RNA sequence: GGGAACGACUCGAGUAGAGUCGAAAAGCUUAGGUUCGCCUAAGCAAAAAGAUAUGGAGGACAGGGAGCACGAAGACACGCAGAUAUCGGAAACGAUGUAGUGUUCAAGUGCGAAGAACUGUCCUCCUAAGUCAAAAAACCAUGGUUCGCCAUGGAAGUUGGAUAUUCCGUUCGCGGAAUAUCCAACAAAAGAAACAACAACAACAAC
Reactivity to 2A3 in 0.01 (KOAc 150mM, MgCl2 10mM, bicine 150mM(pH8.5), 24C), signal-to-noise 1, nucleotides 027 to 156: g010c000u020u010a020g000g050u040u050c210g110c080c030u080a000a050g040c110a060a040a000a000a000g040a000u020a000u060g000g000a010g000g000a000c060a000g000g000g030a020g020c000a000c040g040a230a000g070a000c020a000c000g000c050a020g090a250u220a040u110c010g020g010a030a000a150c000g010a000u040g040u160a200g000u000g020u070u070c040a130a000g010u000g000c000g000a060a060g000a010a010c000u000g000u000c000c000u030c000c000u000a000a000g000u020c010a000a000a000a180a000a000c000c010a000u040g000g000u140u100c240g000c010c000a000u000g000g020a000a020